[RMDB]
RNA sequence: GGGAACGACUCGAGUAGAGUCGAAAACAGGUCUCGCAUCAGUUAGAAGAGCUACAAGGGCGCGCCCAGCAAGAGAUUGCGCGGUUGGAUGCUUGGCUUGAAGAGCGUAAGGCGAGCUUUAUGGAAGAGAUACGGAAGUGUUCGCACUUCCGUAUCUAAAAGAAACAACAACAACAAC
Reactivity to 2A3 in 0.01 (KOAc 150mM, MgCl2 10mM, bicine 150mM(pH8.5), 24C), signal-to-noise 2, nucleotides 027 to 126: c030a020g040g070u070c020u020c040g000c000a060u040c030a030g080u040u150a130g050a260a000g020a070g040c020u060a030c070a100a110g060g060g000c050g000c010g010c020c000c000a010g010c020a030a000g010a010g020a190u030u070g000c040g020c060g020g030u110u130g180g000a080u080g030c040u060u100g000g010c000u030u060g050a070a020g050a010g000c020g010u050a060a070g070g000c010g000a010g000c000u120u090u030a150u090g070g000a080a030g060
Reactivity to DMS in 0.01 (KOAc 150mM, MgCl2 10mM, bicine 150mM(pH8.5), 24C), signal-to-noise 3, nucleotides 027 to 126: c110a090g000g020u010c020u000c030g000c040a080u000c110a140g020u000u000a040g010a150a190g010a050g030c010u000a070c180a080a130g020g010g000c010g010c100g040c000c030c070a280g020c060a030a050g010a110g000a120u000u000g010c010g010c260g000g010u010u020g040g000a050u000g000c030u000u000g030g010c020u020u000g000a090a140g000a030g000c040g010u020a100a090g020g000c040g000a050g010c020u000u000u010a090u020g030g030a150a070g000
Chemical mapping of a 177-nucleotide RNA with 2A3 and DMS. For 2A3 the reverse transcriptase was SuperScript II with manganese. High 2A3 reactivity points to a flexible backbone, as in loops and unpaired stretches. It was measured as part of the RMDB library OK2TST.